[RMDB]
RNA sequence: GGGAACGACUCGAGUAGAGUCGAAAACGUCUGCGCGCGUCCGGCGGAGGUUCGCCUGGACGCAGACGCCGACGCCACCGCCGUGCUCGCGGGCGACGGUCUCGAAGGCGUCGAGCGUUGCGUCUGUUGUCGUGUGAUCUUCCAUGUCGAGCCAGACUCUUUUCAUCCUAUUCGUAGGAUGAAAAGAAAAAGAAACAACAACAACAAC
Reactivity to 2A3 in 0.01 (KOAc 150mM, MgCl2 10mM, bicine 150mM(pH8.5), 24C), signal-to-noise 2, nucleotides 027 to 156: c020g010u000c010u020g070c090g000c040g020c040g290u120c130c050g000g040c120g030g010a050g020g020u100u100c010g030c040c020u120g000g000a000c010g000c010a020g030a010c000g000c000c000g020a000c000g000c000c000a060c040c030g000c000c000g010u020g030c020u040c030g050c220g060g010g000c000g070a020c010g000g000u020c090u140c250g110a190a080g000g000c000g000u000c020g020a060g000c010g010u020u020g000c000g000u000c010u030g220u250u240g100u190c080g010u090g030u040g200a020u000c000u050u000c010c020a080u260g000u050c010g020a020g000c000c000a010g000a000c010

This 207-nucleotide RNA was probed chemically with 2A3.
The data come from the RNA Mapping Database (RMDB), library OK3TST.
For 2A3, 2,264 sequencing reads were counted.
For 2A3 the reverse transcriptase was SuperScript II with manganese.